[RMDB]
RNA sequence: GGGAACGACUCGAGUAGAGUCGAAAAGAAGAGAGUCGACGCAAGCGACGAUAACUGCGGAACGGUAACCGUAGUACCGUAUGGUCAUGGCACGCGAAAGCGAAAGAUCGAAUCAUGCCAUAAGAGAGCUCGUAUACGGUUUCGACCGUAUACGAGCAAAAGAAACAACAACAACAAC
Reactivity to 2A3 in 0.01 (KOAc 150mM, MgCl2 10mM, bicine 150mM(pH8.5), 24C), signal-to-noise 2, nucleotides 027 to 126: g140a000a050g100a050g020a040g030u000c020g000a120c020g020c050a150a090g020c030g000a010c000g020a030u090a010a000c000u080g000c010g060g000a050a110c060g090g030u090a070a020c020c040g060u010a000g060u000a030c000c020g000u060a050u090g000g000u180c010a000u010g090g000c040a000c010g000c000g050a210a000a000g020c000g080a060a150a000g080a020u090c000g040a040a040u110c030a030u000g000c000c000a000u030a110a050g020a000g000a010
Reactivity to DMS in 0.01 (KOAc 150mM, MgCl2 10mM, bicine 150mM(pH8.5), 24C), signal-to-noise 1, nucleotides 027 to 126: g010a090a040g030a030g000a140g000u000c000g000a130c080g000c300a060a130g030c030g030a070c050g000a140u010a040a160c000u010g020c010g050g040a070a000c070g010g000u010a020a070c000c020g000u030a080g060u000a010c000c000g000u000a040u000g000g000u010c100a020u030g000g000c120a200c000g000c000g020a090a080a170g000c000g010a010a160a140g020a010u030c090g000a080a210u010c000a000u010g020c010c010a000u030a000a000g060a080g000a110